Conditions: 150 mM KOAc, 10 mM MgCl2 and 150 mM bicine (pH 8.5), 24 C. An RNA of 207 nucleotides, treated with DMS and 2A3 and read out base by base.

RNA sequence: GGGAACGACUCGAGUAGAGUCGAAAACAAACACUGUAUGGAACUAAUGUACGGUAGGGGAAAUCAUUAACUGAAGAUGCCUUUUUUGUUGCUAUUGUUUAGAACGCAGUUAGAAAAUCUUAUUUUAGAGGUUUUACCCCGUUGACAAAGCCUCAACUAUUCAUAACUGCUUCGGCAGUUAUGAAUAAAAAGAAACAACAACAACAAC
Reactivity to DMS in 0.01 (KOAc 150mM, MgCl2 10mM, bicine 150mM(pH8.5), 24C), signal-to-noise 2, nucleotides 027 to 156: c040a160a090a100c080a070c020u000g040u000a180u000g010g010a150a180c090u010a060a100u000g000u000a030c020g000g030u000a080g030g040g040g000a060a100a050u000c010a090u000u000a040a090c040u000g020a050a090g010a140u000g010c020c000u010u000u030u010u000u000g040u000u000g020c030u000a100u000u000g010u000u010u000a080g020a040a140c100g030c010a050g030u000u000a050g020a050a060a060a060u000c030u000u000a180u020u000u010u000a190g000a050g010g000u000u000u000u000a150c060c000c040c090g000u020u000g000a120c070a040a090a120g020c040c040u010c020a040a170c090
Reactivity to 2A3 in 0.01 (KOAc 150mM, MgCl2 10mM, bicine 150mM(pH8.5), 24C), signal-to-noise 2, nucleotides 027 to 156: c020a010a070a000c010a010c040u060g090u070a050u110g000g090a080a040c070u110a180a110u160g020u070a010c040g010g030u040a050g040g020g000g020a000a080a080u080c070a080u130u170a040a060c040u040g040a050a030g040a070u010g000c010c000u040u100u010u050u100u080g040u000u020g000c000u010a030u190u040g040u010u080u050a030g010a070a010c050g000c050a040g000u090u040a010g100a040a040a010a020u010c020u090u090a200u090u140u030u050a020g000a000g020g010u040u010u010u010a000c050c030c010c000g020u020u020g000a000c020a020a080a000g000c000c010u010c000a000a100c010
Background:
For 2A3, 689 sequencing reads were counted. Values cover nucleotides 27 to 156.